[RMDB]
RNA sequence: GGGAACGACUCGAGUAGAGUCGAAAAAAGAAGGACGCGAGACGCGAACCUGUGAGUGGAAACCCGCUUUAUUCACUGGGGUCGACAACUCUGGGGAGAGAAGGGAGGGUCGGCUGGGAAGAGUAUAUCUAACUGAAAAGUUCGCUUUUCAGUUAGAAAAAGAAACAACAACAACAAC
Reactivity to 2A3 in 0.01 (KOAc 150mM, MgCl2 10mM, bicine 150mM(pH8.5), 24C), signal-to-noise 2, nucleotides 027 to 126: a010a010g070a010a000g040g020a000c010g090c010g070a080g060a160c050g020c010g020a150a080c000c000u040g010u070g060a030g000u030g000g040a050a000a030c000c030c000g080c100u070u160u120a220u130u170c060a010c160u110g080g000g000g080u010c010g020a040c000a170a060c010u000c030u030g010g000g030g000a130g010a010g020a030a160g000g000g190a100g010g000g000u080c100g050g010c140u080g090g020g000a050a060g030a010g040u000a010u000a000
Reactivity to DMS in 0.01 (KOAc 150mM, MgCl2 10mM, bicine 150mM(pH8.5), 24C), signal-to-noise 2, nucleotides 027 to 126: a070a060g010a150a040g000g000a090c080g000c080g040a120g010a090c100g020c020g000a050a170c020c020u010g020u010g020a050g010u020g000g000a100a100a060c040c010c020g010c100u030u000u010a060u000u010c080a080c110u010g050g030g030g010u010c070g020a160c230a030a040c040u000c020u010g020g000g020g000a170g000a100g010a050a050g000g010g010a140g010g010g000u000c080g000g010c080u010g020g000g000a020a030g000a080g010u010a100u000a060